[RMDB]
RNA sequence: GGGAACGACUCGAGUAGAGUCGAAAAAUUCAGCAAUCCACCGGUAGCGUAAUGAAUCGUGAAGACCCCCGUUGAUAAGGAAUAAGGGCAGGUCACGUUGCUAUUGGUUAUCUAUACCAGUCUGCUUUGAACUGUGCAUUUUCGAAUGCACAGUUCAAAAAGAAACAACAACAACAAC
Reactivity to 2A3 in 0.01 (KOAc 150mM, MgCl2 10mM, bicine 150mM(pH8.5), 24C), signal-to-noise 2, nucleotides 027 to 126: a010u070u040c130a010g030c020a030a050u060c070c020a000c000c010g000g010u000a000g000c000g010u030a000a000u150g220a100a180u070c050g020u060g060a040a110g300a240c000c000c000c000c020g040u100u050g180a070u210a150a070g120g040a080a030u090a010a060g000g000g030c050a030g000g150u010c000a000c000g000u040u080g000c000u000a000u030u020g000g000u100u010a040u080c090u070a090u050a010c000c000a000g030u040c030u000g080c000u060u000
This 177-nucleotide RNA was probed chemically with 2A3.
It was measured as part of the RMDB library RFM100.